RNA sequence: GGGAACGACUCGAGUAGAGUCGAAAAUGGAACUUGGAGAUCAUUGGCACUUAUGCCCAGACAGAGAUGGGUCAUGGUAUGGAGUAUUCAGUCUACCUUCUGGGUUGGGCGGGCCCCUGUGAGCUUACCAUGUGUGGAGUGCCCACCAUGUGCCAUCACAUGUUUCCCUUUUCGAAGGGAAACAUGUAAAAGAAACAACAACAACAAC
Reactivity to DMS in 0.01 (KOAc 150mM, MgCl2 10mM, bicine 150mM(pH8.5), 24C), signal-to-noise 2, nucleotides 027 to 156: u010g020g000a070a130c070u000u010g020g010a140g040a090u000c060a130u040u020g030g010c000a080c060u000u000a100u010g020c000c000c010a070g010a240c120a160g010a120g010a090u000g010g030g010u000c060a090u000g010g010u020a080u000g020g000a160g030u010a140u000u000c100a110g040u010c020u000a060c070c010u000u010c060u000g000g020g020u000u000g020g020g010c040g020g010g000c000c010c000c040u040g010u000g000a150g030c060u000u000a090c060c020a060u000g040u000g030u010g020g000a150g040u000g020c050c000c000a060c010c020a040u000g010u000g040c000c020a110u000c050
Reactivity to 2A3 in 0.01 (KOAc 150mM, MgCl2 10mM, bicine 150mM(pH8.5), 24C), signal-to-noise 3, nucleotides 027 to 156: u100g010g020a030a070c050u060u050g060g030a070g030a080u090c050a130u060u060g010g000c020a010c040u130u110a050u240g000c010c000c000a010g020a030c020a040g080a010g050a110u080g030g010g030u090c060a100u070g050g000u110a080u110g090g030a080g090u090a090u080u180c040a030g120u060c020u030a090c010c010u070u070c030u040g090g000g000u070u070g070g000g000c050g000g010g020c000c000c000c020u070g050u030g080a040g020c040u080u050a080c050c000a030u050g110u000g080u090g140g040a090g030u120g050c000c000c000a000c000c000a030u040g010u010g020c000c010a020u050c020
An RNA of 207 nucleotides, treated with DMS and 2A3 and read out base by base. For DMS, 4,002 sequencing reads were counted. The reactions ran in a buffer of 150 mM KOAc, 10 mM MgCl2 and 150 mM bicine (pH 8.5), at 24 C.